[RMDB]
RNA sequence: GGGAACGACUCGAGUAGAGUCGAAAAGGCGGUCGAGAGGCCCUCUCAUUAAUGCGGAGGUGUCACGCUGACAGAAUGAUAUUAGAUGUCCGCUUCCGGUUGCAUCGCGGCGAUGAUUACAUAGGACAUCGAUUACCCAUUAGCUUCGGGGAAGCCAAUGAUACCCAUUAUUCGUAAUGGGUAUCAUAAAAGAAACAACAACAACAAC
Reactivity to DMS in 0.01 (KOAc 150mM, MgCl2 10mM, bicine 150mM(pH8.5), 24C), signal-to-noise 3, nucleotides 027 to 156: g010g020c040g020g020u010c020g040a140g020a120g050g010c020c010c010u000c030u020c020a210u010u000a100a150u010g020c100g010g000a060g010g030u000g030u000c040a100c060g010c020u010g000a100c050a070g000a120a090u010g010a140u000a120u000u010a140g010a080u000g000u000c000c000g010c100u010u000c040c030g020g010u010u000g010c030a130u000c090g020c090g000g030c050g020a090u000g010a110u000u010a070c080a150u010a070g010g000a020c010a040u000c010g010a140u000u000a080c020c020c000a110u000u000a110g000c040u010u000c040g020g000g040g010a090a100g010c010c040a100
Reactivity to 2A3 in 0.01 (KOAc 150mM, MgCl2 10mM, bicine 150mM(pH8.5), 24C), signal-to-noise 5, nucleotides 027 to 156: g040g000c040g010g030u100c050g060a010g010a060g090g010c010c030c000u010c000u010c010a160u160u300a210a090u170g030c100g040g000a020g010g020u130g030u090c040a040c090g020c040u040g020a010c000a060g160a100a080u120g060a020u050a100u130u160a050g010a030u010g000u000c000c010g010c030u100u030c030c020g060g030u080u070g050c030a060u060c080g040c080g150g060c090g040a070u050g020a050u050u250a090c050a080u160a070g000g020a000c000a010u000c010g000a000u000u100a040c020c000c000a020u070u110a020g050c040u060u080c050g020g020g000g000a020a010g010c010c000a030